[RMDB]
An RNA of 207 nucleotides, treated with 2A3 and read out base by base. 2A3 adducts were read by reverse transcription with SuperScript II with manganese.

RNA sequence: GGGAACGACUCGAGUAGAGUCGAAAACAGAACUGGAUGGGCCGUGUGCUUAACCAGGACAAGAUCUCCUUCUCUCCAACGUUGUUGCCAACGCAUGAUUCUCCUAACCUGUGCUUGGAGAGACGUGCUACCAUAUAGGUGUUCGCACCUAUAUGAACUAUUGAGCUCAGUUCGCUGAGCUCAAUAGAAAAGAAACAACAACAACAAC
Reactivity to 2A3 in 0.01 (KOAc 150mM, MgCl2 10mM, bicine 150mM(pH8.5), 24C), signal-to-noise 1, nucleotides 027 to 156: c010a030g070a080a050c020u000g010g040a040u030g010g060g030c120c150g170u220g180u230g050c000u000u070a030a030c000c030a040g020g020a060c090a080a060g020a170u030c030u050c010c020u110u010c030u010c020u070c090c020a150a150c120g030u000u000g000u010u010g010c040c000a130a000c090g020c000a010u060g060a220u060u040c040u000c000c000u080a100a130c020c030u160g050u160g120c050u070u090g000g000a020g000a030g020a020c010g000u000g020c040u050a050c000c030a000u020a010u000a010g000g000u020g020u010u030c120g050c040a000c000c000u000a000u000a000u000g010a020a000
Record summary
The data come from the RNA Mapping Database (RMDB), library M2RFPK. Values cover nucleotides 27 to 156.